[RMDB]
RNA sequence: GGGAACGACUCGAGUAGAGUCGAAAACCCCAGGUCUUUGGGGAGCAUCAGAGGCAGGGAAGCUGAGUCCCAUCAUCAAGUGCAAAGGAUGAGCAGGGAACUGAAAACAUGAGGAAAAGUUGGCUAAGUUGACCCUUGGCUGGUACACAGUAAGCUACAUGCAUUUAGCGUUCGCGCUAAAUGCAUGAAAAGAAACAACAACAACAAC
Reactivity to 2A3 in 0.01 (KOAc 150mM, MgCl2 10mM, bicine 150mM(pH8.5), 24C), signal-to-noise 1, nucleotides 027 to 156: c000c000c000c000a040g080g050u020c030u100u190u120g030g020g070g020a040g060c020a030u050c030a020g030a000g060g000c070a020g020g000g010a050a000g000c000u020g020a050g070u030c000c010c030a030u020c000a020u010c010a020a190g160u120g090c060a090a110a020g080g000a010u020g040a000g100c140a100g010g080g000a090a110c030u080g020a020a000a020a070c000a020u090g020a060g000g060a090a100a000a080g040u160u020g020g000c000u030a040a030g060u080u040g080a080c010c010c010u030u040g000g000c060u060g000g040u080a020c060a000c000a050g040u130a090a000g020c020u010a030